[RMDB]
Overview: Structure probing data (DMS and 2A3) for a 177-nucleotide construct.
RNA sequence: GGGAACGACUCGAGUAGAGUCGAAAACUCUUUCACGGUUAAGUCUGUCUCUGGCAGAGCAGACGGUCAGGAGGAUGAGGUCACCAUCUUCACGAAGCCAAAGCCAAAUUCCGCCUUGUCCUGUAAAAUGGGUAUACCAUUUCGAUGGUAUACCCAUAAAAGAAACAACAACAACAAC
Reactivity to DMS in 0.01 (KOAc 150mM, MgCl2 10mM, bicine 150mM(pH8.5), 24C), signal-to-noise 4, nucleotides 027 to 126: c000u000c030u010u010u010c080a100c130g010g000u000u000a080a140g020u000c000u010g000u020c000u010c020u010g010g000c100a150g030a010g010c030a020g000a040c020g000g020u020c020a260g010g000a080g010g020a030u000g010a090g020g000u000c060a090c030c050a030u000c000u010u000c030a130c090g010a120a130g000c020c030a060a150a130g000c030c010a050a070a140u020u020c030c020g010c010c010u000u000g010u010c000c000u010g000u020a040a050a060
Reactivity to 2A3 in 0.01 (KOAc 150mM, MgCl2 10mM, bicine 150mM(pH8.5), 24C), signal-to-noise 5, nucleotides 027 to 126: c000u010c000u020u140u100c110a080c090g100g010u090u130a120a020g020u020c020u030g140u100c000u000c010u070g140g040c130a040g000a010g010c010a000g000a010c010g000g010u040c020a040g000g070a000g010g000a020u050g010a020g010g100u090c010a040c070c020a040u020c000u060u070c050a100c160g050a040a000g030c010c000a090a060a010g020c000c000a020a130a080u070u010c010c000g020c010c000u020u040g030u070c000c000u050g070u130a040a080a050

The reactions ran in a buffer of 150 mM KOAc, 10 mM MgCl2 and 150 mM bicine (pH 8.5), at 24 C.
High 2A3 reactivity points to a flexible backbone, as in loops and unpaired stretches.